[RMDB]
Chemical mapping of a 177-nucleotide RNA with 2A3. The reactions ran in a buffer of 150 mM KOAc, 10 mM MgCl2 and 150 mM bicine (pH 8.5), at 24 C. For 2A3 the reverse transcriptase was SuperScript II with manganese. Values cover nucleotides 27 to 126.
RNA sequence: GGGAACGACUCGAGUAGAGUCGAAAAUUCACCAUCACAGGCUUCUGGCUUCGCAGGAUGGCGCUGGCUCUGGGAUGGCAGCUGUGCGCAGGUUGGGGAGAGGCUUUGUUCUUGCGGAUCAUGUGUGGAAGGUCGAACAUUUCGAUGUUCGACCUUCAAAAGAAACAACAACAACAAC
Reactivity to 2A3 in 0.01 (KOAc 150mM, MgCl2 10mM, bicine 150mM(pH8.5), 24C), signal-to-noise 1, nucleotides 027 to 126: u080u090c020a070c090c020a050u050c040a030c020a040g100g000c030u070u130c040u220g020g000c000u080u050c080g000c050a020g010g080a020u100g040g000c000g000c000u020g000g000c000u000c040u080g000g000g120a070u080g110g000c020a050g000c020u070g050u070g080c000g000c030a040g110g000u120u110g020g010g050g010a030g010a030g000g050c020u030u040u130g060u100u020c020u000u030g010c020g050g030a100u070c040a100u150g040u000g000u040g140